[RMDB]
RNA sequence: GGGAACGACUCGAGUAGAGUCGAAAAGGGCUUUUGGCUGAGAGGUAUACUUUUGUAGAAUUAGAGAUGUUUAAAAGGGAUAGUUUUCAAGUUUUUAAAUCCUUCAUACCACAGCUUUCUGCAGUGACAUAUCGACUAGAUUCGUCUAGUCGAUAUGAAAAGAAACAACAACAACAAC
Reactivity to 2A3 in 0.01 (KOAc 150mM, MgCl2 10mM, bicine 150mM(pH8.5), 24C), signal-to-noise 3, nucleotides 027 to 126: g000g000g020c020u070u060u070u090g030g000c020u030g020a040g020a030g110g070u040a100u040a110c010u080u100u080u060g070u110a040g030a130a040u070u030a070g020a000g010a120u070g090u030u190u130a070a130a040a040g020g000g020a030u030a080g090u050u050u020u110c090a080a070g010u050u000u070u180u210a040a090a020u010c000c000u020u040c020a030u050a050c010c030a000c040a030g050c000u040u090u020c010u040g000c010a060g040u010g060a020
Reactivity to DMS in 0.01 (KOAc 150mM, MgCl2 10mM, bicine 150mM(pH8.5), 24C), signal-to-noise 5, nucleotides 027 to 126: g010g000g010c050u000u000u000u000g000g020c030u010g010a100g010a040g010g010u000a050u000a070c030u000u000u000u000g000u010a090g000a070a060u000u010a120g010a190g000a080u010g010u010u000u000a030a050a090a080g010g000g010a070u000a050g000u000u000u000u000c070a040a090g010u000u010u010u010u010a030a070a080u000c010c000u000u010c090a110u010a130c070c030a050c150a090g010c050u000u000u000c070u010g020c050a070g020u010g010a190
The data come from the RNA Mapping Database (RMDB), library OK2TST. The record gives the reactivity of an RNA of 177 nucleotides to 2A3 and DMS. Reactivities are given for positions 27 through 126.